Overview
Structure probing data (DMS) for a 207-nucleotide construct.
RNA sequence: GGGAACGACUCGAGUAGAGUCGAAAACUCCUAAGGGUAGUCCUUACUUACCUUGAGUCCAGCUGAAGCUGGGGUUUUUAUGGGCUCAAAAUGGAGGAAGUGUGUGCUGAUUGGUCCCUGGGCAGGAGGAAGUGCGUGCUGAGUGGUCCAUGGGUGGCACUUCUAGUACGUUCGCGUACUAGAAGUGAAAAGAAACAACAACAACAAC
Reactivity to DMS in 0.01 (KOAc 150mM, MgCl2 10mM, bicine 150mM(pH8.5), 24C), signal-to-noise 1, nucleotides 027 to 156: c050u000c020c030u000a090a140g000g020g040u010a050g010u020c020c020u010u010a080c110u000u000a050c030c030u000u010g000a070g000u000c030c030a070g010c100u000g010a080a130g050c050u000g020g030g030g020u020u000u000u010u010a070u030g020g010g010c020u000c020a060a050a090a090u000g010g010a100g000g020a070a090g010u010g000u000g020u000g040c050u010g000a200u010u000g040g000u000c020c000c000u000g000g000g010c070a040g020g020a170g040g010a050a070g020u010g000c030g020u000g020c020u000g000a130g030u000g010g010u000c040c030a080u020g020g010g010u010g010g000